Structure probing data (DMS) for a 177-nucleotide construct.
The reactions ran in a buffer of 150 mM KOAc, 10 mM MgCl2 and 150 mM bicine (pH 8.5), at 24 C.
Values are in units of 0.01, from 0 to 300, in steps of 10.
For DMS the reverse transcriptase was MarathonRT.
It was measured as part of the RMDB library M2PK90.
Reactivities are given for positions 27 through 126.
[RMDB]
RNA sequence: GGGAACGACUCGAGUAGAGUCGAAAACACAUGCCAUCAUAUCGGUUAAGAACUCUUAACUCUGAUGGGUUUCGAGUUAUGUGGUGCAUUGAAGCUCUCCCUUCAAUUCAACGUACCGUUCCGUCAACCACAGGAGUGAUUUCGAUCACUCCUGUGGAAAAGAAACAACAACAACAAC
Reactivity to DMS in 0.01 (KOAc 150mM, MgCl2 10mM, bicine 150mM(pH8.5), 24C), signal-to-noise 2, nucleotides 027 to 126: c070a130c140a090u000g010c040c000a040u000c040a070u000a090u010c160g010g000u000u000a070a110g010a150a100c300u030c020u000u000a010a010c000u010c060u000g010a050u020g030g030g010u000u000u000c030g010a030g000u000u000a040u000g010u010g000g010u000g030c050a060u010u000g010a060a000g000c120u000c130u000c100c070c000u020u010c090a060a070u000u010c070a000a040c050g030u010a020c080c010g000u010u000c020c030g040u010c080a070a120